Source information
Source: RMDB library 15KREP, as collected in RNAgym. The record gives the reactivity of an RNA of 177 nucleotides to DMS and 2A3. Values cover nucleotides 27 to 126.
[RMDB]
RNA sequence: GGGAACGACUCGAGUAGAGUCGAAAAAUAUGCCCAGAAUCUGCUUAAGAAGUUGAUUGGCGGUGAUGUCACUCCAGUUGACCAAUACAUGUGUGGCGUUGAUGGAAAACCCAUUAGUGCCUACGCAGAAAUUCCGUAAGUUCGCUUACGGAAUUUCAAAAGAAACAACAACAACAAC
Reactivity to DMS in 0.01 (KOAc 150mM, MgCl2 10mM, bicine 150mM(pH8.5), 24C), signal-to-noise 1, nucleotides 027 to 126: a170u020a090u010g010c020c000c000a110g010a160a280u000c060u010g030c110u000u010a080a060g000a130a110g000u010u000g000a020u000u000g010g000c300g000g000u000g000a290u000g010u000c020a070c000u000c040c000a030g010u000u000g030a030c000c080a050a070u000a060c290a120u000g000u000g060u000g000g010c000g020u000u000g000a020u000g000g000a200a100a130a280c300c000c000a020u000u000a000g040u010g000c000c000u000a030c000g000c000a030
Reactivity to 2A3 in 0.01 (KOAc 150mM, MgCl2 10mM, bicine 150mM(pH8.5), 24C), signal-to-noise 1, nucleotides 027 to 126: a000u180a020u270g090c000c020c020a030g010a000a070u040c010u060g050c020u150u040a140a010g080a040a030g090u010u000g000a010u000u030g000g040c100g000g000u070g100a160u210g300u290c020a020c010u030c000c000a000g010u000u000g020a010c000c020a030a150u050a160c150a140u100g000u020g000u010g020g000c010g000u010u000g010a010u020g000g000a000a120a030a100c000c000c000a020u000u000a020g020u010g040c000c010u020a000c020g060c010a020
About this RNA
The reactions ran in a buffer of 150 mM KOAc, 10 mM MgCl2 and 150 mM bicine (pH 8.5), at 24 C.